[RMDB]
RNA sequence: GGGAACGACUCGAGUAGAGUCGAAAAAUGGAUCACCUGCGACAGCUGCAGAACAUCAUUCAGGCCACGUCCAGGGAGAUCAUGUGGAUCAAUGACUGCGAGGAGGAGGAGCUGCUGUACGACUGGAGCAAUCGAAUUUAUUCGUAAAUUCGAUUGCAAAAGAAACAACAACAACAAC
Reactivity to 2A3 in 0.01 (KOAc 150mM, MgCl2 10mM, bicine 150mM(pH8.5), 24C), signal-to-noise 4, nucleotides 027 to 126: a020u120g060g000a010u030c010a000c020c000u030g010c070g040a010c010a030g030c020u080g000c060a060g040a100a070c030a130u190c010a030u030u130c010a040g060g030c040c010a110c110g010u000c020c010a010g030g030g000a250g000a010u030c040a020u100g060u050g060g030a070u080c020a060a080u140g070a070c020u030g050c060g040a030g050g010a040g000g020a040g000g020a010g020c030u050g000c010u020g040u070a090c060g050a030c090u030g020g010a040
Reactivity to DMS in 0.01 (KOAc 150mM, MgCl2 10mM, bicine 150mM(pH8.5), 24C), signal-to-noise 5, nucleotides 027 to 126: a060u010g000g000a040u000c040a100c030c020u000g000c150g020a070c040a120g010c090u000g010c080a110g010a050a090c180a130u020c200a120u010u000c040a120g020g010c030c070a090c160g020u010c040c000a050g000g000g000a100g010a020u010c040a050u010g020u010g010g000a090u000c070a070a070u000g000a050c040u010g010c090g010a080g000g010a070g020g000a070g020g000a070g030c040u000g030c040u010g010u000a070c130g010a100c050u000g000g010a300
Notes:
An RNA of 177 nucleotides, treated with 2A3 and DMS and read out base by base. It was measured as part of the RMDB library OK2TRN. The reactions ran in a buffer of 150 mM KOAc, 10 mM MgCl2 and 150 mM bicine (pH 8.5), at 24 C.